[RMDB]
RNA sequence: GGGAACGACUCGAGUAGAGUCGAAAAUAGCGAAGUAGCAUUUUAUGCGUCAAGUGUUCACAGGCUGGGGAGUCGCCGUGAAACGAAAAGCAGAAAGCGUGCUGCUUACGAUAUAAUUUCCGCACCCAUAAGAAGUCUCUGUUCGCAGAGACUUCAACACUAGGGUGUUCUUCGGAACACCCUAGUGAAAAGAAACAACAACAACAAC
Reactivity to DMS in 0.01 (KOAc 150mM, MgCl2 10mM, bicine 150mM(pH8.5), 24C), signal-to-noise 1, nucleotides 027 to 156: u010a020g010c030g020a050a100g040u000a050g050c040a080u000u000u020u000a010u010g000c000g000u000c060a060a300g010u000g000u000u000c010a040c050a150g010g010c040u010g010g010g010g000a080g010u000c020g030c020c030g000u030g000a020a090a020c010g000a110a040a030a060g020c010a040g020a050a060a070g000c210g040u010g030c000u020g000c000u010u000a050c020g000a050u010a030u000a000a190u000u000u000c030c000g000c000a200c020c010c010a270u020a080a190g010a030a010g030u000c000u000c000u000g000u020u000c300g000c020a010g010a020g010a020c010u010u010c000a070a120
Reactivity to 2A3 in 0.01 (KOAc 150mM, MgCl2 10mM, bicine 150mM(pH8.5), 24C), signal-to-noise 4, nucleotides 027 to 156: u040a000g030c000g020a010a010g010u020a000g010c000a040u020u040u040u070a060u050g020c030g030u060c070a080a090g030u080g130u210u040c040a030c070a120g000g000c040u120g040g030g020g030a100g100u150c040g010c010c000g010u000g000a010a010a010c030g020a060a060a070a010g000c020a000g100a060a030a010g110c050g040u010g000c000u000g000c000u000u020a100c000g000a000u010a020u010a070a120u020u030u040c020c010g030c040a090c010c050c000a070u080a160a080g000a000a000g000u000c000u000c000u000g030u060u080c150g030c070a000g000a000g000a000c000u000u010c000a000a000